[RMDB]
RNA sequence: GGGAACGACUCGAGUAGAGUCGAAAAAGUGAGUAUGGCUCGUUACGACGAGCCAUACUCACAACGGUUUUCCUAAAUCGUCGUGAGACGGACCUUGGAAAACCUAGUAUUUAAAUACCUAGGUCAAAUUAGCCUAGAUCCUUCGGGAUCUAGGCAACCAUCAACUAACCUUCGGGUUAGUUGAUGGAAAAGAAACAACAACAACAAC
Reactivity to 2A3 in 0.01 (KOAc 150mM, MgCl2 10mM, bicine 150mM(pH8.5), 24C), signal-to-noise 2, nucleotides 027 to 156: a000g000u000g010a010g010u000a000u000g010g000c020u010c030g020u020u020a120c300g000a000c010g000a130g030c000c000a010u000a000c000u000c010a000c000a000a000c000g000g020u000u000u000u000c010c000u000a000a000a000u030c000g000u000c000g010u010g150a120g000a040c000g000g000a010c010c000u000u010g000g000a000a000a000a000c000c000u000a020g020u020a070u060u150u110a100a160a060u170a060c010c020u010a000g000g000u010c000a000a110a000u140u120a020g000c010c000u000a000g000a000u000c000c010u010u130c260g120g000g010a000u000c000u000a000g000g000c000a000a000

Description
This 207-nucleotide RNA was probed chemically with 2A3. Values are in units of 0.01, from 0 to 300, in steps of 10. The data come from the RNA Mapping Database (RMDB), library M2RFPK. For 2A3 the reverse transcriptase was SuperScript II with manganese.